[RMDB]
RNA sequence: GGGAACGACUCGAGUAGAGUCGAAAACGGCCGCCAACGAGCUGGUUGCAAAGGAAGGGGUGGUGAUGAUCUCCGGCUCCUUCUUCUCGAAUGUCGGCAUGGCGGUUGCCGAUUUCGCCAAGCAGAAACGUCCCACGCUGUUCGCAGCGUGGGACGUAAAAGAAACAACAACAACAAC
Reactivity to 2A3 in 0.01 (KOAc 150mM, MgCl2 10mM, bicine 150mM(pH8.5), 24C), signal-to-noise 1, nucleotides 027 to 126: c000g000g000c000c000g000c000c010a000a000c030g110a040g180c000u040g070g000u070u040g060c200a040a040a040g040g050a000a010g000g000g000g000u000g000g040u000g000a300u200g000a030u250c020u030c030c040g030g020c010u010c000c010u000u000c000u040u020c030u040c100g120a070a000u210g070u240c000g010g000c000a010u000g070g000c000g000g080u070u060g000c000c000g050a020u000u000u000c150g040c010c020a110a040g080c000a050g050a070a170